[RMDB]
RNA sequence: GGGAACGACUCGAGUAGAGUCGAAAAGCAGGUUGCUUAGCGCCCGACGCAGCAUCAGCGGAUCGCCCGCGACCUGACACUUGUCGCCAACAAACCGCAACUCCACGCCGCGAUCUUCCGCUAACGCCGAGUCCUACCAUUUCGAUGGUAGGACUCGAAAAGAAACAACAACAACAAC
Reactivity to DMS in 0.01 (KOAc 150mM, MgCl2 10mM, bicine 150mM(pH8.5), 24C), signal-to-noise 2, nucleotides 027 to 126: g040c030a080g020g000u000u000g020c040u010u020a130g030c070g000c150c030c060g000a100c080g020c060a090g020c060a070u000c100a090g000c020g000g000a100u000c060g000c040c100c280g020c050g010a010c050c040u000g000a070c110a130c170u000u010g010u030c000g000c010c010a070a100c090a000a120a070c110c060g010c050a030a070c060u000c070c070a080c070g000c050c060g000c100g000a040u000c060u000u000c020c030g040c000u010a060a120c200g030c050
Reactivity to 2A3 in 0.01 (KOAc 150mM, MgCl2 10mM, bicine 150mM(pH8.5), 24C), signal-to-noise 2, nucleotides 027 to 126: g090c030a030g040g070u110u080g000c050u070u100a040g000c000g000c050c020c010g000a040c040g000c030a040g030c020a070u090c040a020g000c020g060g000a050u110c060g040c040c060c000g030c020g010a020c000c020u060g070a050c020a020c060u100u180g040u060c030g050c090c010a040a020c060a040a120a070c030c010g020c010a060a090c000u000c000c000a040c110g020c000c010g020c000g010a050u000c030u060u040c030c020g040c060u030a050a020c030g020c080

Chemical mapping of a 177-nucleotide RNA with DMS and 2A3. DMS (dimethyl sulfate) methylates the pairing face of unpaired adenines and cytosines. For DMS the reverse transcriptase was MarathonRT. The RNA was probed in 150 mM KOAc, 10 mM MgCl2 and 150 mM bicine (pH 8.5) at 24 C.